[RMDB]
Structure probing data (2A3) for a 177-nucleotide construct. Conditions: 150 mM KOAc, 10 mM MgCl2 and 150 mM bicine (pH 8.5), 24 C.

RNA sequence: GGGAACGACUCGAGUAGAGUCGAAAACCAAGGUAGUUCGCUACCUUGGAAAGAAAGCUCGAGCGAAGGCAAGGGAAAGGACGCUCGAGCAACCCACCCAAAAAAGAGCAUGCUUCGGCAUGCUCAACCCCAAUGGAUACUUCGGUAUCCAUUGGGGAAAAGAAACAACAACAACAAC
Reactivity to 2A3 in 0.01 (KOAc 150mM, MgCl2 10mM, bicine 150mM(pH8.5), 24C), signal-to-noise 2, nucleotides 027 to 126: c020c000a000a000g000g010u010a000g040u000u050c190g030c130u000a000c000c020u010u000g020g010a010a000a020g080a010a050a010g020c000u010c000g010a010g010c020g040a110a030g100g020c120a080a080g100g020g020a190a270a070g050g010a020c000g020c000u010c020g010a010g000c010a000a010c000c010c020a040c030c060c020a070a190a060a000a020a010g000a010g000c020a000u000g000c000u040u050c240g090g000c000a010u000g000c000u020c000a010a000